RNA sequence: GGGAACGACUCGAGUAGAGUCGAAAAGAAUUGGUAUGUAAGCUACGCCUUCCGGUAGCUGCGUCACACUUUAAGAGUGUGCAUACUGAGCCGAAGCUCAGCUUCGGUCCCCCAAGGGAAGAGCAAACCACUAGGAGGUCUUCGGACCUCCUAGUGGAAAAGAAACAACAACAACAAC
Reactivity to DMS in 0.01 (KOAc 150mM, MgCl2 10mM, bicine 150mM(pH8.5), 24C), signal-to-noise 1, nucleotides 027 to 126: g000a130a040u000u000g060g000u010a030u000g010u000a150a190g000c020u000a030c000g000c100c000u000u000c000c000g000g020u000a000g000c010u010g030c020g010u000c000a000c000a000c000u000u000u000a140a090g000a030g050u000g000u010g000c030a000u000a000c000u000g000a000g010c000c000g000a000a000g040c030u050c250a080g000c000u000u000c020g010g050u000c080c000c000c150c120a030a080g000g030g000a010a010g000a300g000c190a040a110a160
Reactivity to 2A3 in 0.01 (KOAc 150mM, MgCl2 10mM, bicine 150mM(pH8.5), 24C), signal-to-noise 3, nucleotides 027 to 126: g110a010a110u030u020g010g000u010a010u000g000u010a000a000g020c010u000a000c010g030c000c000u020u010c000c020g000g000u000a000g010c000u000g000c000g010u010c000a000c000a010c010u060u090u300a280a120g150a000g300u000g000u000g000c000a000u000a000c000u000g010a010g000c000c000g000a000a000g010c030u040c300a020g000c000u010u000c010g000g000u010c000c000c000c000c050a020a010g070g000g000a000a020g000a000g050c010a050a020a020

Structure probing data (DMS and 2A3) for a 177-nucleotide construct. DMS adducts were read by reverse transcription with MarathonRT.